An RNA of 177 nucleotides, treated with 2A3 and DMS and read out base by base. Conditions: 150 mM KOAc, 10 mM MgCl2 and 150 mM bicine (pH 8.5), 24 C. Source: RMDB library TTRDEL, as collected in RNAgym.

[RMDB]
RNA sequence: GGGAACGACUCGAGUAGAGUCGAAAAGAUAUGGACGACAGCAACAGCGUGAACAUCGGAAACGAUGUCACGACAUGCUGAGUCCUAAGUCAAAACCUUGAUUUGGGGUUCGCCCCAAAUCAAGGAAGCAACACACAAUGUUCGCAUUGUGUGUUGCAAAAGAAACAACAACAACAAC
Reactivity to 2A3 in 0.01 (KOAc 150mM, MgCl2 10mM, bicine 150mM(pH8.5), 24C), signal-to-noise 2, nucleotides 027 to 126: g000a010u020a010u050g000g000a020c030g130a190c080a020g010c000a030a140c060a210g160c030g010u010g020a100a040c000a020u000c000g000g040a000a020a010c000g020a000u000g000u000c010a000c020g120a100c010a040u030g000c010u000g000a000g000u000c000c000u010a030a000g000u000c030a020a030a080a210c010c000u000u020g000a010u000u000u000g000g010g040g100u060u090c290g210c020c000c000c000a000a000a000u020c000a000a000g000g000a010a010
Reactivity to DMS in 0.01 (KOAc 150mM, MgCl2 10mM, bicine 150mM(pH8.5), 24C), signal-to-noise 3, nucleotides 027 to 126: g000a020u000a120u010g000g000a010c000g010a190c260a010g000c000a020a130c300a090g010c010g020u000g000a070a030c000a000u000c000g020g000a060a030a090c000g000a020u000g010u000c000a000c000g000a120c140a050u000g000c000u000g000a300g000u000c000c000u010a010a090g000u010c020a150a030a140a190c000c010u000u000g000a020u000u000u010g010g010g010g000u000u010c270g010c030c000c000c000a000a000a000u000c000a020a010g010g010a010a050